[RMDB]
RNA sequence: GGGAACGACUCGAGUAGAGUCGAAAAGAUAUGGAGCUGGUGGACAUGCUCUCUCGGAAACGAGGUGAGCAACAGCCACCCAGCUCCUAAGUCAAAACCGCACCAACCGUUCGCGGUUGGUGCGGAACUACUAACUUAACUUCGGUUAAGUUAGUAGAAAAGAAACAACAACAACAAC
Reactivity to DMS in 0.01 (KOAc 150mM, MgCl2 10mM, bicine 150mM(pH8.5), 24C), signal-to-noise 2, nucleotides 027 to 126: g000a040u010a300u010g000g000a000g050c000u000g000g010u010g000g000a060c100a210u000g000c000u000c010u000c000u010c000g000g000a110a090a140c010g010a010g010g020u000g000a030g020c010a030a060c300a120g000c000c010a010c040c070c080a010g000c000u000c010c000u000a000a050g000u010c030a120a070a090a160c010c010g000c000a020c000c000a000a030c000c000g030u000u010c270g020c020g000g000u000u020g000g000u000g030c000g000g000a000a050
Reactivity to 2A3 in 0.01 (KOAc 150mM, MgCl2 10mM, bicine 150mM(pH8.5), 24C), signal-to-noise 2, nucleotides 027 to 126: g020a010u040a020u100g000g000a010g000c010u010g000g040u010g010g050a140c050a150u060g000c000u000c000u000c000u000c000g000g050a070a010a020c020g010a010g110g230u250g030a000g000c000a030a080c060a040g080c000c000a000c030c000c000a000g000c000u000c000c000u010a010a010g010u010c000a000a000a100a180c010c000g000c040a010c040c020a000a020c020c030g100u130u120c300g020c030g200g000u050u000g020g010u030g050c080g000g010a010a000